An RNA of 177 nucleotides, treated with DMS and read out base by base.
It was measured as part of the RMDB library OK2TRN.
[RMDB]
RNA sequence: GGGAACGACUCGAGUAGAGUCGAAAAGUAGAGGUCUUUGGGCCCAGCCAAUGGGCCGGCGCCGUACAGGGAUCCAACGCCGUCAUCAACCUGGCAGGUGAGCCAAUCAGCUCCAGGUGGACGCCUGGAAGGCUAAGUCGUUCGCGACUUAGCCUUCAAAAGAAACAACAACAACAAC
Reactivity to DMS in 0.01 (KOAc 150mM, MgCl2 10mM, bicine 150mM(pH8.5), 24C), signal-to-noise 1, nucleotides 027 to 126: g010u030a020g010a170g020g030u000c020u000u000u000g010g010g020c010c000c010a050g030c070c110a150a160u000g050g010g020c010c010g030g010c110g030c050c030g000u000a280c110a070g000g010g010a080u030c010c100a130a160c170g000c040c000g010u000c010a090u000c070a270a010c040c010u000g030g000c300a020g020g020u000g010a050g010c190c150a060a150u010c070a100g010c000u010c000c000a000g010g020u000g000g010a030c040g000c030c020u000g000